Structure probing data (2A3 and DMS) for a 207-nucleotide construct.
For 2A3 the reverse transcriptase was SuperScript II with manganese.
The data come from the RNA Mapping Database (RMDB), library RNAMAK.
The reactions ran in a buffer of 150 mM KOAc, 10 mM MgCl2 and 150 mM bicine (pH 8.5), at 24 C.
For 2A3, 2,376 sequencing reads were counted.
For DMS the reverse transcriptase was MarathonRT.

RNA sequence: GGGAACGACUCGAGUAGAGUCGAAAACAGCCACUUCGGUGGCUGGGGGUGCGUACUACUUGACAUGCUGAUAGCUGGAGAGACAUCCCAAAUAGGAUGUCUCGAUGAAAGCUAAUAGCAACAGCAAGUAUCGCUUAAGUGAAGCUUCGGCUUCAAAUUAACAUGUAGGGUUCGCCCUACAUGUUAAAAAAGAAACAACAACAACAAC
Reactivity to 2A3 in 0.01 (KOAc 150mM, MgCl2 10mM, bicine 150mM(pH8.5), 24C), signal-to-noise 3, nucleotides 027 to 156: c000a000g000c000c000a010c000u100u140c300g150g000u010g000g000c000u000g000g000g010g040g000u060g020c000g050u090a100c040u000a000c000u080u010g090a090c030a090u080g020c000u040g060a160u030a020g010c010u010g010g000a000g000a000g010a020c000a000u020c000c010c020a190a300a080u300a040g000g010a000u000g000u010c000u000c000g010a050u020g000a000a010a010g010c000u020a060a040u070a030g010c000a010a070c000a030g070c000a000a020g010u010a030u300c040g000c000u040u080a170a080g060u080g050a000a000g000c000u020u210c230g100g000c000u010u020c070a000a050a030
Reactivity to DMS in 0.01 (KOAc 150mM, MgCl2 10mM, bicine 150mM(pH8.5), 24C), signal-to-noise 3, nucleotides 027 to 156: c000a000g040c030c000a010c020u000u020c300g060g010u010g010g020c010u010g000g000g060g030g000u010g020c060g070u000a100c130u010a020c000u000u000g010a060c060a300u000g010c000u000g010a180u020a010g000c000u010g000g000a140g000a010g020a030c000a000u000c000c000c020a030a150a230u000a050g000g010a020u000g000u000c010u000c010g030a060u010g010a200a210a090g010c000u000a020a150u000a050g010c010a010a130c130a100g020c010a010a050g000u010a040u000c030g010c030u000u000a040a150g000u010g010a020a050g000c000u000u010c300g080g020c000u000u000c010a020a050a150